[RMDB]
RNA sequence: GGGAACGACUCGAGUAGAGUCGAAAAUUUGCUUGUUUUGGUUAUGGUUGGCACAUUGAUGUCGGAAUUCAUGCAAUACAUCUAGUAUUAUCUGGCAUUUUUGAUCGUUAUCCAAAGUUAAAUAUGAGCAUUCAAUAUCUUUCGAGAUAUUGAAUGCAAAAGAAACAACAACAACAAC
Reactivity to 2A3 in 0.01 (KOAc 150mM, MgCl2 10mM, bicine 150mM(pH8.5), 24C), signal-to-noise 3, nucleotides 027 to 126: u040u010u080g030c030u050u050g040u050u070u010u040g080g010u100u050a090u080g010g000u010u050g020g010c030a000c010a090u010u050g020a010u010g000u010c020g000g040a050a030u170u080c090a040u200g070c090a030a040u020a060c020a040u070c090u150a060g020u030a020u050u020a050u020c010u010g000g000c000a000u000u000u030u010u030g090a130u070c040g020u030u040a020u040c010c000a080a000a030g020u100u120a110a150a060u220a100u090g080a050
Reactivity to DMS in 0.01 (KOAc 150mM, MgCl2 10mM, bicine 150mM(pH8.5), 24C), signal-to-noise 4, nucleotides 027 to 126: u020u000u000g020c070u000u000g010u000u000u000u000g010g000u000u000a090u010g010g010u000u000g010g010c020a060c040a030u010u010g000a020u000g020u000c020g000g000a030a160u010u000c200a120u000g010c150a030a020u010a050c030a120u000c200u010a180g000u000a020u000u010a090u000c010u000g020g000c010a010u000u000u000u000u000g000a050u000c080g010u000u000a040u000c000c010a020a070a130g000u000u010a020a060a090u000a060u020g010a250
Conditions: 150 mM KOAc, 10 mM MgCl2 and 150 mM bicine (pH 8.5), 24 C. The record gives the reactivity of an RNA of 177 nucleotides to 2A3 and DMS.